[RMDB]
RNA sequence: GGGAACGACUCGAGUAGAGUCGAAAACGCCGACAUCAACGACAUGGCGACCUGCUCCCGCGACGAUCUGGUGCGCUGGACGGCGUCCUCGCACACCCACGGCGCCGGCGGCUAUCAGGCAUCCACCACUACCGGCAACGUCGCCGGUACCAGCGGCGCAACAGCUUUUGUUCGCAAAAGCUGUUGCAAAAGAAACAACAACAACAAC
Reactivity to 2A3 in 0.01 (KOAc 150mM, MgCl2 10mM, bicine 150mM(pH8.5), 24C), signal-to-noise 2, nucleotides 027 to 156: c030g010c000c000g090a140c050a140u210c110a130a120c080g090a050c060a090u160g010g040c020g060a130c000c050u040g050c030u020c020c010c000g020c020g020a070c050g040a090u090c050u120g000g020u090g090c070g010c020u050g000g050a170c020g040g000c040g040u050c000c030u070c020g060c010a030c000a080c070c030c010a050c050g040g010c010g000c000c000g020g010c000g000g000c020u020a030u110c030a050g030g080c010a030u090c020c040a050c020c050a030c070u100a040c040c010g060g000c050a110a090c100g110u110c070g010c000c000g000g000u000a010c000c000a000g040c010g050g000c030